Source: RMDB library OK3TST, as collected in RNAgym. An RNA of 207 nucleotides, treated with 2A3 and read out base by base.
RNA sequence: GGGAACGACUCGAGUAGAGUCGAAAAGCUAGUCGGUGACGACUAGCAGCCACGACUAAGGUCGUGGGAAGAUGCUCACAAAGUGCACAGUGGCAUCAAUAACUACAUCAUGUGCACAAACCGGAUUAACGGAUAACAUUAAAAUUUAAGAUGUAGGUAUGAUGCACGGUUUCGACCGUGCAUCAUAAAAAGAAACAACAACAACAAC
Reactivity to 2A3 in 0.01 (KOAc 150mM, MgCl2 10mM, bicine 150mM(pH8.5), 24C), signal-to-noise 1, nucleotides 027 to 156: g000c000u000a000g010u000c000g000g000u060g030a080c010g000a010c000u000a000g000c000a030g000c000c000a000c000g020a000c010u170a210a060g190g000u090c000g010u000g000g060g000a000a000g000a000u060g000c000u090c240a000c000a000a040a090g000u000g000c000a000c000a000g000u020g000g000c000a000u010c000a030a030u170a070a000c020u000a000c000a000u030c000a040u090g000u000g000c000a010c010a000a000a000c000c000g060g000a160u270u300a070a030c030g090g060a130u120a170a000c040a030u230u210a040a040a040a060u150u290u280a220a060g000a000u010g000u040a000g100g000